[RMDB]
RNA sequence: GGGAACGACUCGAGUAGAGUCGAAAAUUCUGAAGACAUGGUGCCGAUAUACUCAGUCAUUUGUUUGUUAAGGCAUCAUAUCGGGAUGAUCUUAUGCUGACUAGCCCAUAUUUGGAUGAAAAAGCAGGAGUAAACCCGUGUUCGCACGGGUUUACUCAAAAGAAACAACAACAACAAC
Reactivity to DMS in 0.01 (KOAc 150mM, MgCl2 10mM, bicine 150mM(pH8.5), 24C), signal-to-noise 1, nucleotides 027 to 126: u030u030c000u000g000a250a100g010a040c100a000u000g000g000u030g000c000c000g000a170u040a080u000a020c080u040c030a030g050u000c300a030u040u000u000g000u000u000u000g010u000u000a190a210g000g000c000a000u000c000a000u000a000u030c000g000g000g010a030u000g000a000u030c000u000u000a010u000g000c010u010g000a040c260u000a030g040c120c020c080a120u010a250u030u020u030g000g020a080u000g000a120a150a120a090a000g000c100a050g000
Reactivity to 2A3 in 0.01 (KOAc 150mM, MgCl2 10mM, bicine 150mM(pH8.5), 24C), signal-to-noise 1, nucleotides 027 to 126: u000u000c010u000g000a000a030g050a060c020a000u010g020g000u000g040c000c000g000a000u000a000u000a280c010u010c050a090g300u130c110a180u050u140u090g080u010u020u010g070u000u000a020a030g000g000c000a000u000c000a000u060a000u000c070g060g000g000a000u090g000a050u020c000u000u050a110u100g000c030u000g000a140c000u040a000g210c000c000c000a050u240a120u090u130u010g020g070a050u070g090a080a170a000a000a000g160c040a040g160
Conditions: 150 mM KOAc, 10 mM MgCl2 and 150 mM bicine (pH 8.5), 24 C. The record gives the reactivity of an RNA of 177 nucleotides to DMS and 2A3. The 2A3 profile rests on 557 reads. It was measured as part of the RMDB library RFM100.